Conditions: 150 mM KOAc, 10 mM MgCl2 and 150 mM bicine (pH 8.5), 24 C. Structure probing data (2A3 and DMS) for a 177-nucleotide construct. Source: RMDB library OK1LIB, as collected in RNAgym. Reactivities are given for positions 27 through 126. The DMS profile rests on 43,184 reads.
RNA sequence: GGGAACGACUCGAGUAGAGUCGAAAAGAGAGAUGGAGGGCGGCUUUGGAUUAUUGUCACUAACAUGUUGAAUGAUGCACUCGAUGAAGCAUUGCAAGGAGCUGUCCUAGCAGCUGGUGGUGCUGUCCAAUAGUACGGCAUUCGUGCCGUACUAUUGAAAAGAAACAACAACAACAAC
Reactivity to 2A3 in 0.01 (KOAc 150mM, MgCl2 10mM, bicine 150mM(pH8.5), 24C), signal-to-noise 9, nucleotides 027 to 126: g080a000g010a000g000a010u090g050g020a020g030g010g020c030g020g010c010u040u020u060g050g010a040u070u070a090u110u260g080u060c050a030c110u090a210a040c050a150u110g030u070u060g090a120a110u120g030a040u070g020c030a030c050u070c060g080a110u150g090a060a020g010c030a050u020u150g010c010a040a060g050g010a020g040c050u030g050u060c010c010u020a030g010c020a000g000c010u060g040g070u080g010g020u050g020c020u030g040u040c020
Reactivity to DMS in 0.01 (KOAc 150mM, MgCl2 10mM, bicine 150mM(pH8.5), 24C), signal-to-noise 9, nucleotides 027 to 126: g010a080g000a060g010a070u010g010g010a060g010g010g010c060g010g000c040u000u010u010g010g000a100u020u020a060u020u020g010u000c070a070c110u020a090a100c160a080u010g010u020u000g000a080a070u020g010a050u000g010c060a080c060u010c110g010a100u030g000a100a060g000c040a030u010u000g010c060a080a100g010g000a030g010c070u000g010u010c050c030u000a050g000c020a050g020c020u000g000g010u010g000g020u010g000c010u010g010u000c080